[RMDB]
This 207-nucleotide RNA was probed chemically with 2A3.

RNA sequence: GGGAACGACUCGAGUAGAGUCGAAAAUCUGGGAUCCGCUGGGCAAUACUUUCGAUGUACGGGAGCGUCCUGAAGCGCGCACGGGACGCGAAGAACGUACAUACGAAAGUUGCCUGUGCUGAAGCGCGCACGGCAACCGAAAGGUGCGACACUGUACGCACUUACUUGAGUUCGCUCAAGUAAGUGCAAAAGAAACAACAACAACAAC
Reactivity to 2A3 in 0.01 (KOAc 150mM, MgCl2 10mM, bicine 150mM(pH8.5), 24C), signal-to-noise 1, nucleotides 027 to 156: u050c030u070g050g040g090a110u100c070c010g000c000u000g000g010g000c000a020a020u050a300c040u050u000u000c000g000a000u000g030u000a000c010g000g000g030a000g020c000g000u000c000c000u000g020a160a040g020c010g000c000g020c010a000c010g040g000g000a010c010g000c000g050a040a000g000a000a000c000g090u010a000c000a000u090a260c000g000a000a000a020g000u010u010g010c000c000u010g000u010g030c000u010g040a150a060g050c010g000c000g010c010a050c030g000g000c000a000a000c000c000g080a070a040a020g010g000u020g020c010g100a020c040a010c120u130g080u210a060c180

The reactions ran in a buffer of 150 mM KOAc, 10 mM MgCl2 and 150 mM bicine (pH 8.5), at 24 C. It was measured as part of the RMDB library RNAMAK. Values are in units of 0.01, from 0 to 300, in steps of 10.